[RMDB]
RNA sequence: GGGAACGACUCGAGUAGAGUCGAAAAUACAUAGUGGAAACACCAGGGCCACAUUACUUAGGUAUCAAGAUGAACGACGUGGAUCUAGCUUAUUAAAUUGGCAAAACAUAGACACCAAGAAAUAGAAUCUUAUAGUGUUGUUCGCAACACUAUAAGAAAAAGAAACAACAACAACAAC
Reactivity to 2A3 in 0.01 (KOAc 150mM, MgCl2 10mM, bicine 150mM(pH8.5), 24C), signal-to-noise 2, nucleotides 027 to 126: u130a030c080a040u150a030g080u050g040g040a040a090a000c020a000c000c040a070g050g000g020c000c020a030c000a070u010u090a040c040u030u110a040g060g000u050a040u110c060a050a040g030a150u070g020a060a030c040g090a010c030g100u040g030g010a020u030c010u000a030g050c020u040u000a030u040u130a130a120a110u090u030g020g000c010a040a010a070a050c040a020u070a040g040a000c020a010c050c020a020a000g080a040a080a000u150a040g100a030a030
Reactivity to DMS in 0.01 (KOAc 150mM, MgCl2 10mM, bicine 150mM(pH8.5), 24C), signal-to-noise 4, nucleotides 027 to 126: u000a090c090a080u000a050g040u020g020g010a090a110a090c060a090c050c040a060g020g010g000c020c030a050c060a060u000u010a040c070u010u010a060g010g000u000a030u000c110a080a060g000a070u000g010a070a060c080g020a070c060g040u000g010g020a060u000c050u000a080g010c030u000u000a070u000u010a020a060a090u000u010g010g000c110a050a050a030a050c090a110u010a080g000a050c090a040c010c020a050a040g000a050a060a090u000a070g020a100a110